[RMDB]
Conditions: 150 mM KOAc, 10 mM MgCl2 and 150 mM bicine (pH 8.5), 24 C. This 177-nucleotide RNA was probed chemically with 2A3 and DMS.
RNA sequence: GGGAACGACUCGAGUAGAGUCGAAAAUCACAAAGCGGAUUUAGCUCGGUUGGGAGAGGUCCAGACCGAAGAUCUGGUUGUCCUGUGGACGAGUCACAGAAUUCGCACCAUAAACAACGGGAGAUUCAAUAGUGACGUACUUCGGUACGUCACUAUUAAAAGAAACAACAACAACAAC
Reactivity to 2A3 in 0.01 (KOAc 150mM, MgCl2 10mM, bicine 150mM(pH8.5), 24C), signal-to-noise 3, nucleotides 027 to 126: u070c010a030c080a120a080a020g020c030g000g010a020u000u030u040a020g020c010u000c020g130g090u180u300g120g040g000a020g020a030g100g030u050c000c010a030g000a020c000c110g080a060a050g020a100u000c000u000g020g000u030u040g120u050c000c010u060g020u060g070g060a040c010g010a000g090u110c040a070c000a190g090a070a010u000u010c020g000c050a050c010c000a030u140a120a150a010c070a040a010c070g050g040g040a080g010a100u150u050c040
Reactivity to DMS in 0.01 (KOAc 150mM, MgCl2 10mM, bicine 150mM(pH8.5), 24C), signal-to-noise 3, nucleotides 027 to 126: u020c030a050c180a100a060a120g010c020g010g010a010u000u000u010a160g030c020u000c000g000g000u000u000g000g000g000a090g060a050g000g040u040c040c010a040g020a040c010c040g030a100a080g060a250u010c000u000g000g000u040u000g000u010c060c030u010g000u050g020g010a220c040g010a020g020u000c140a160c220a110g000a040a000u000u020c000g020c020a100c060c080a100u020a080a040a040c120a060a060c110g000g010g020a090g000a130u000u020c120
DMS adducts were read by reverse transcription with MarathonRT.